RNA sequence: GGGAACGACUCGAGUAGAGUCGAAAAAUUGUAGUUUGAAGAUGUGCUCUUUUGAGCAGUCUCAACUUUGCUCGUUCCCGUUAUGGGAAAAAUUUUGGAAGGUCUUGGUAGGAACGGGUGGAUCUUAGGUAUAUAAUAGGUUCGCCUAUUAUAUACCAAAAGAAACAACAACAACAAC
Reactivity to 2A3 in 0.01 (KOAc 150mM, MgCl2 10mM, bicine 150mM(pH8.5), 24C), signal-to-noise 7, nucleotides 027 to 126: a000u150u140g050u040a050g030u030u040u200g090a180a070g000a010u110g060u060g300c000u050c030u070u230u210u300g000a000g000c010a010g000u000c000u000c000a000a010c010u090u080u140g010c010u010c020g010u010u010c010c000c000g000u110u140a100u150g010g010g000a000a050a030a080a110u190u270u150u100g090g030a060a030g030g000u020c040u100u060g040g020u060a030g020g000a030a010c030g020g000g040u040g030g020a020u010c000u010u040a030
Reactivity to DMS in 0.01 (KOAc 150mM, MgCl2 10mM, bicine 150mM(pH8.5), 24C), signal-to-noise 4, nucleotides 027 to 126: a060u010u000g010u010a030g010u000u000u000g020a070a070g010a020u000g010u000g010c010u000c000u000u000u010u010g020a020g010c000a170g000u000c010u000c010a020a020c030u000u000u010g020c050u000c030g020u000u000c000c000c010g010u010u010a050u010g010g020g010a010a040a040a060a130u000u000u000u010g020g010a080a070g000g000u000c040u000u000g000g010u000a070g010g010a050a070c070g000g010g020u000g010g000a080u010c030u000u000a220